[RMDB]
RNA sequence: GGGAACGACUCGAGUAGAGUCGAAAACCUGCGUCGGAAUGGCACUUCCGAAAAUGGGCUGUAGCGCAGCGUGACCAUGCUGUGCGAGGACGACCUAACGUCCUCUCUAUGAGCCGACCGGCUCCCUCAGUAGUAGUUUCUUCGGAAACUACUACUGAAAAGAAACAACAACAACAAC
Reactivity to 2A3 in 0.01 (KOAc 150mM, MgCl2 10mM, bicine 150mM(pH8.5), 24C), signal-to-noise 4, nucleotides 027 to 126: c000c010u030g050c070g100u040c020g000g090a110a120u080g120g000c040a020c090u060u050c020c000g070a100a050a030a080u190g050g010g000c060u080g090u190a040g020c000g010c020a020g000c020g050u060g070a110c020c030a050u080g010c010u000g010u010g000c030g010a000g000g010a000c000g050a060c020c120u120a160a060c010g000u000c020c000u000c000u000c000u030a100u200g070a010g010c000c030g030a120c040c070g010g040c020u010c030c000c000u020
Reactivity to DMS in 0.01 (KOAc 150mM, MgCl2 10mM, bicine 150mM(pH8.5), 24C), signal-to-noise 3, nucleotides 027 to 126: c040c000u010g010c270g030u000c010g000g000a070a030u000g000g020c120a080c120u000u000c030c010g010a040a030a100a060u010g010g030g000c030u010g030u000a090g010c090g030c000a000g010c020g010u000g000a120c210c150a080u010g040c000u000g000u000g000c050g010a000g000g010a010c000g000a210c250c150u000a090a180c020g010u000c000c000u000c000u010c120u000a040u000g000a040g010c020c010g000a100c160c110g020g000c030u000c000c110c040u000
Chemical mapping of a 177-nucleotide RNA with 2A3 and DMS.
Reactivities are given for positions 27 through 126.
For 2A3 the reverse transcriptase was SuperScript II with manganese.
For DMS, 1,924 sequencing reads were counted.